RNA sequence: GGGAACGACUCGAGUAGAGUCGAAAAGAUAUGGACGAUUAAACAGACAUGCGUGAAUUUCGGAAACGAAAUCCACGCAACAGCUGUGAUCGUCCUAAGUCAAAACGUCGUACUUCGGUACGACGAACUCUAGAUGAAAGUUCGCUUUCAUCUAGAGAAAAGAAACAACAACAACAAC
Reactivity to DMS in 0.01 (KOAc 150mM, MgCl2 10mM, bicine 150mM(pH8.5), 24C), signal-to-noise 6, nucleotides 027 to 126: g000a020u000a060u010g000g000a010c000g010a010u000u010a120a130a120c010a010g010a030c110a120u020g010c000g030u000g000a030a000u000u000u000c000g020g000a020a010a040c000g010a010a010a000u000c010c000a000c000g020c000a020a010c160a180g000c000u000g010u000g000a010u000c000g000u000c000c000u000a000a050g000u010c000a120a090a100a200c020g010u000c000g010u000a010c000u000u020c220g020g000u000a000c000g010a000c000g010a020a060
Reactivity to 2A3 in 0.01 (KOAc 150mM, MgCl2 10mM, bicine 150mM(pH8.5), 24C), signal-to-noise 7, nucleotides 027 to 126: g010a010u020a010u070g000g000a000c010g000a010u040u120a300a300a090c010a000g080a030c140a250u300g000c010g010u000g010a020a010u020u000u000c000g000g000a010a010a010c000g000a000a000a010u010c010c010a010c000g030c010a010a010c010a010g000c000u010g000u020g020a010u010c000g000u000c000c000u000a000a000g000u000c030a010a020a100a180c020g000u000c000g000u010a000c010u050u090c300g150g010u000a010c000g000a000c000g000a010a000